[RMDB]
RNA sequence: GGGAACGACUCGAGUAGAGUCGAAAAAAAAUGAAGUUCAUGGGCUGGACGCAGUGGCUCACGCCUGUAAUCCCAGCACUUUGUGUAGUGGAGGCUGGCAGAUCACUUGAGUCCAGGAGUUUGAGACCAAACUGGGCAAUGACAGAACCCCAUAUCACGAUUUUACUAAUUUCGAUUAGUAAAAUCGAAAAGAAACAACAACAACAAC
Reactivity to 2A3 in 0.01 (KOAc 150mM, MgCl2 10mM, bicine 150mM(pH8.5), 24C), signal-to-noise 3, nucleotides 027 to 156: a000a000a010a030u120g040a130a030g070u070u070c080a020u080g040g020g040c010u000g000g010a000c030g000c030a010g000u010g040g010c040u010c070a030c120g000c000c000u060g020u060a070a080u060c010c010c030a010g020c000a020c060u140u300u210g050u010g000u020a170g020u120g140g010a010g010g000c060u040g030g000c010a020g030a090u050c000a010c000u100u080g020a010g000u000c000c000a000g000g010a020g010u040u060u090g080a070g030a040c070c000a040a050a050c060u060g000g020g040c050a050a150u080g030a060c030a050g100a130a140c030c010c020c010a040u050a040u170c060a050
Reactivity to DMS in 0.01 (KOAc 150mM, MgCl2 10mM, bicine 150mM(pH8.5), 24C), signal-to-noise 2, nucleotides 027 to 156: a020a020a020a020u000g020a080a080g000u000u000c050a090u000g000g000g030c030u000g010g010a050c020g010c030a050g020u020g000g030c110u000c040a090c100g020c020c000u030g020u000a040a090u000c020c000c000a290g020c040a050c010u000u000u000g060u010g020u010a090g040u000g010g010a130g020g010c080u000g020g030c000a200g000a080u000c030a040c030u000u000g020a060g000u000c000c010a030g010g000a050g000u000u000u000g020a160g000a090c040c010a030a070a100c100u010g010g040g020c010a080a050u010g010a060c010a070g000a080a080c000c010c000c020a090u010a100u010c100a160
Chemical mapping of a 207-nucleotide RNA with 2A3 and DMS.
The reactions ran in a buffer of 150 mM KOAc, 10 mM MgCl2 and 150 mM bicine (pH 8.5), at 24 C.
Values cover nucleotides 27 to 156.
For 2A3 the reverse transcriptase was SuperScript II with manganese.